[RMDB]
RNA sequence: GGGAACGACUCGAGUAGAGUCGAAAACAGAUGAUGGGACCUGUAUCAGGUUAUGUGCUAAAAGCCGAGGGCUUCCCGACCGUUUAUAUAAUGGGUGACUGCCGAUGGGAAGCAUGUAUCCGAGACACCAAAUAGUAGCAUUCGUGCUACUAUUUGGAAAAGAAACAACAACAACAAC
Reactivity to DMS in 0.01 (KOAc 150mM, MgCl2 10mM, bicine 150mM(pH8.5), 24C), signal-to-noise 6, nucleotides 027 to 126: c070a100g000a060u020g010a070u010g000g000g000a170c090c010u000g020u020a080u020c050a120g020g000u010u000a020u010g020u010g000c020u020a060a080a110a130g010c020c010g020a190g020g010g010c030u010u000c020c000c010g030a120c040c030g010u000u020u010a070u020a080u020a060a050u010g000g020g000u010g000a060c100u010g010c020c020g010a160u040g010g010g010a080a040g020c010a030u000g020u000a030u000c020c010g010a140g000a080c180a160
Reactivity to 2A3 in 0.01 (KOAc 150mM, MgCl2 10mM, bicine 150mM(pH8.5), 24C), signal-to-noise 9, nucleotides 027 to 126: c020a020g140a110u160g020a060u080g070g010g060a030c020c010u040g040u120a100u160c050a030g010g000u040u040a030u070g060u030g010c040u110a070a060a070a080g030c010c020g050a100g030g060g000c000u060u010c010c000c010g010a030c010c020g020u010u130u010a300u040a080u090a080a110u140g070g020g020u070g070a080c100u110g030c030c030g070a090u170g010g020g040a020a010g010c010a010u050g020u020a040u010c020c020g020a030g010a040c050a010
Annotation: This 177-nucleotide RNA was probed chemically with DMS and 2A3. The DMS profile rests on 17,506 reads. The reactions ran in a buffer of 150 mM KOAc, 10 mM MgCl2 and 150 mM bicine (pH 8.5), at 24 C.